An RNA of 177 nucleotides, treated with 2A3 and DMS and read out base by base. The 2A3 profile rests on 24,838 reads. 2A3 adducts were read by reverse transcription with SuperScript II with manganese. DMS adducts were read by reverse transcription with MarathonRT.

RNA sequence: GGGAACGACUCGAGUAGAGUCGAAAAGAUAUGGAUUCGCGCAUUUCGGCAGAAGCCGAGUCGGAAACGAUAUCUUCUGGCCGAUUCAACGAAUCCUAAGUCAAACGGCACUGUUCGCAGUGCCGAAGAAUAGUUGUUACUUCGGUAACAACUAUUCAAAAGAAACAACAACAACAAC
Reactivity to 2A3 in 0.01 (KOAc 150mM, MgCl2 10mM, bicine 150mM(pH8.5), 24C), signal-to-noise 6, nucleotides 027 to 126: g030a010u070a030u160g000g010a000u010u000c010g000c020g000c180a100u040u050u010c000g010g000c010a000g010a020a010g010c130c170g070a100g050u020c000g010g010a050a060a030c020g000a010u020a050u070c000u020u010c010u050g300g010c010c000g000a010u030u040c060a060a020c010g000a000a000u010c000c000u010a110a010g070u030c050a080a050a060c020g000g020c000a000c010u000g060u090u090c300g000c130a000g000u010g000c010c000g000a010a000
Reactivity to DMS in 0.01 (KOAc 150mM, MgCl2 10mM, bicine 150mM(pH8.5), 24C), signal-to-noise 9, nucleotides 027 to 126: g010a040u000a300u010g000g000a010u000u000c000g010c030g010c190a300u000u000u000c010g010g010c000a030g000a020a010g010c300c180g000a100g010u000c000g000g000a090a090a170c010g010a020u000a070u000c000u000u000c000u000g010g020c000c000g000a020u000u000c180a130a040c010g000a010a010u000c000c010u000a040a110g000u000c030a090a110a280c010g000g000c000a010c000u000g010u000u010c190g020c000a020g010u000g010c000c000g010a010a040